RNA sequence: GGGAACGACUCGAGUAGAGUCGAAAAGUUAUGCUCUCGCUGCCUAAUGGUGGUGCGGGAAACCCACUCUAAAGUCCUUAGGGUUAGCCCCUUAAGGCGGGGUUCGGAGGCACCUGGCAACAGAAGCUGAAACUGUGCACAUUCGUGUGCACAGUAACACAUUAUGUCGCUUCGGCGACAUAAUGUGAAAAGAAACAACAACAACAAC
Reactivity to 2A3 in 0.01 (KOAc 150mM, MgCl2 10mM, bicine 150mM(pH8.5), 24C), signal-to-noise 1, nucleotides 027 to 156: g050u050u060a070u300g000c000u000c010u010c100g030c010u020g000c000c000u300a300a250u300g070g000u090g000g060u010g060c140g000g000g020a000a000a060c000c000c030a130c030u150c080u220a170a110a190g300u080c000c000u000u000a020g020g010g060u040u100a030g100c000c000c000c000u000u040a000a000g030g000c000g000g000g020g020u040u110c060g090g010a010g080g000c000a030c030c000u010g300g010c000a000a000c010a010g000a050a000g010c010u030g000a100a030a010c000u000g020u000g030c000a000c000a020u040u150c230g080u050g010u000g000c010a000c000a000g010u000a010a000

Structure probing data (2A3) for a 207-nucleotide construct. Values cover nucleotides 27 to 156. The 2A3 profile rests on 510 reads. The reactions ran in a buffer of 150 mM KOAc, 10 mM MgCl2 and 150 mM bicine (pH 8.5), at 24 C. Reactivities are rounded to 0.1 and cut off at 0 and 3. The data come from the RNA Mapping Database (RMDB), library M2RFPK.